[RMDB]
Chemical mapping of a 177-nucleotide RNA with DMS and 2A3. High 2A3 reactivity points to a flexible backbone, as in loops and unpaired stretches. The reactions ran in a buffer of 150 mM KOAc, 10 mM MgCl2 and 150 mM bicine (pH 8.5), at 24 C. It was measured as part of the RMDB library M2PK50. Values are in units of 0.01, from 0 to 300, in steps of 10.

RNA sequence: GGGAACGACUCGAGUAGAGUCGAAAAAACCGUAAAUUCGUUUACGGUUAACCGCAACCGAGCCGAAAGGCUUUUUAUGCGUACGGUGGCGAAAGCCUAAAAUACCAUAGGCCUUCGGGCCUAUGAAACUCCUCCUAUAUUUCGAUAUAGGAGGAGUAAAAGAAACAACAACAACAAC
Reactivity to DMS in 0.01 (KOAc 150mM, MgCl2 10mM, bicine 150mM(pH8.5), 24C), signal-to-noise 4, nucleotides 027 to 126: a030a010c000c000g010u000a000a000a040u000u010c180g020u000u000u000a000c000g010g000u000u000a030a100c090c000g020c040a050a040c150c160g000a030g020c000c000g000a100a070a150g010g000c000u000u000u000u000u010a110u010g010c070g010u010a090c140g010g010u000g010g010c020g010a090a050a150g000c010c000u000a060a050a040a090u010a090c180c000a010u000a000g010g000c000c010u000u010c190g040g000g010c000c000u000a010u000g000a030a110
Reactivity to 2A3 in 0.01 (KOAc 150mM, MgCl2 10mM, bicine 150mM(pH8.5), 24C), signal-to-noise 1, nucleotides 027 to 126: a000a000c000c000g000u000a020a000a030u080u030c160g030u010u020u010a010c010g010g010u020u000a020a030c040c000g020c010a020a000c020c030g030a010g020c010c010g090a080a040a020g010g000c030u000u020u000u000u020a020u010g000c010g010u020a080c080g110g040u090g010g000c000g060a100a020a010g020c010c010u030a070a080a050a030u100a040c080c000a000u000a000g000g020c000c000u010u060c160g090g020g010c000c000u020a010u000g000a030a020